[RMDB]
Chemical mapping of a 177-nucleotide RNA with 2A3. The reactions ran in a buffer of 150 mM KOAc, 10 mM MgCl2 and 150 mM bicine (pH 8.5), at 24 C. It was measured as part of the RMDB library OK1LIB. As a SHAPE reagent, 2A3 marks flexible, mostly unpaired nucleotides at the ribose 2'-OH. For 2A3, 779 sequencing reads were counted.
RNA sequence: GGGAACGACUCGAGUAGAGUCGAAAAAUGCCGGUCGCGACCUUGCCGACGGUCUCUAGUUCGCCCGUCGUCUCGUUCCUGACAGAGAGUUCGAACGUGCCCAGGAAGGUCGCUCGUCGACCUUCGCCGGUGGGACGUCGUUCGCGACGUCCCACCGAAAAGAAACAACAACAACAAC
Reactivity to 2A3 in 0.01 (KOAc 150mM, MgCl2 10mM, bicine 150mM(pH8.5), 24C), signal-to-noise 1, nucleotides 027 to 126: a000u090g020c040c000g030g060u080c040g000c030g070a080c000c250u200u160g060c030c060g020a090c010g000g000u000c020u040c020u000a210g050u090u020c080g020c010c050c010g010u050c020g050u000c030u020c070g030u060u050c000c000u020g000a070c090a010g080a000g020a040g110u000u220c000g000a030a000c000g000u020g040c120c000c000a030g120g000a000a000g000g010u000c010g000c000u010c030g020u040c000g000a000c000c000u000u050c070g000c010